Chemical mapping of a 207-nucleotide RNA with DMS and 2A3. It was measured as part of the RMDB library VIROID. Reactivities are given for positions 27 through 156. DMS adducts were read by reverse transcription with MarathonRT.
[RMDB]
RNA sequence: GGGAACGACUCGAGUAGAGUCGAAAAUCGGACCGGCUCAUCUCGACAAGAGGCGGCAAUCCUCAGUGCUCUUACUCUUUUCUGAUAAAGUGGAGACUGCUGGACUCGCCGCCCAAGUUCGAGCAUGAGCCAUCUCCGAACGAAGGAUCGCGCCGGGCACAGUAGUUAUCUUCGGAUAACUACUGUGAAAAGAAACAACAACAACAAC
Reactivity to DMS in 0.01 (KOAc 150mM, MgCl2 10mM, bicine 150mM(pH8.5), 24C), signal-to-noise 1, nucleotides 027 to 156: u000c040g070g020a060c210c130g010g030c030u030c000a070u010c000u000c010g020a050c080a300a270g010a100g040g000c000g050g120c030a040a030u010c000c000u000c010a060g000u010g020c010u010c020u000u010a140c040u000c040u060u000u010u000c120u020g010a180u010a010a060a050g010u010g000g000a090g030a110c010u000g010c180u000g000g000a030c030u000c230g050c050c000g000c020c000c000a040a210g010u000u000c000g000a030g000c120a040u000g000a020g000c010c010a000u000c010u000c030c000g000a040a180c130g000a130a120g000g010a070u000c070g000c130g030c000c030g050g000g070
Reactivity to 2A3 in 0.01 (KOAc 150mM, MgCl2 10mM, bicine 150mM(pH8.5), 24C), signal-to-noise 5, nucleotides 027 to 156: u060c000g010g010a000c020c050g000g000c000u000c000a010u010c000u010c010g020a020c010a080a090g100a170g050g010c000g010g000c020a000a020u000c000c000u000c010a080g020u160g300c010u020c010u150u300a120c020u070c060u120u150u290u110c160u160g150a250u250a280a090a000g000u000g020g000a000g010a000c000u010g050c110u010g000g000a010c020u040c180g000c000c000g000c000c000c000a020a010g030u080u030c010g000a000g030c070a000u000g000a000g000c000c000a000u000c000u000c000c000g010a050a010c050g070a100a050g100g020a060u120c050g000c030g050c030c030g020g000g000